Chemical mapping of a 207-nucleotide RNA with 2A3 and DMS. For DMS, 2,342 sequencing reads were counted. DMS adducts were read by reverse transcription with MarathonRT.
[RMDB]
RNA sequence: GGGAACGACUCGAGUAGAGUCGAAAAUUUUACAAGGCUACAGAGUUCAAUUUCGCUGUGAUUACUGAGUGAGUAUUUAGUGACUUCCCAGCUUUGGUUACUUUUUCAGAUUUACUUUAGUAGUUAUUAAACACCUACUAAAACUAAAACCUGGUACUACCUCCAUGUAAUUCGUUACAUGGAGGUAAAAAGAAACAACAACAACAAC
Reactivity to 2A3 in 0.01 (KOAc 150mM, MgCl2 10mM, bicine 150mM(pH8.5), 24C), signal-to-noise 1, nucleotides 027 to 156: u020u010u040u020a090c000a030a010g020g020c020u090a030c020a040g050a010g080u100u240c130a080a180u070u010u140c070g010c070u030g000u070g130a110u090u100a050c030u090g030a000g080u010g060a010g060u080a090u020u020u090a040g010u030g010a030c030u000u010c000c000c000a010g020c010u040u030u000g030g000u080u020a120c020u070u110u040u030u100c000a000g000a000u040u100u050a020c000u020u000u000a010g020u000a010g040u050u160a090u060u060a190a120a000c000a020c020c000u000a000c000u010a000a040a000a000c000u010a000a000a060a060c070c030u030g000g000u080a040c010
Reactivity to DMS in 0.01 (KOAc 150mM, MgCl2 10mM, bicine 150mM(pH8.5), 24C), signal-to-noise 2, nucleotides 027 to 156: u010u000u000u010a110c010a080a240g000g020c040u000a060c000a050g010a050g010u020u000c040a130a130u000u000u010c040g010c020u000g010u020g020a120u000u000a040c070u000g000a300g020u000g010a090g000u000a010u000u010u000a080g020u000g010a080c040u000u010c010c020c000a170g010c070u000u000u010g000g010u010u000a080c010u000u000u000u000u000c030a040g000a060u010u000u000a040c020u000u000u000a010g020u000a020g010u010u000a180u040u000a080a160a150c070a150c300c000u000a010c010u000a000a000a010a090c020u000a080a010a020a050c000c010u020g050g010u000a090c120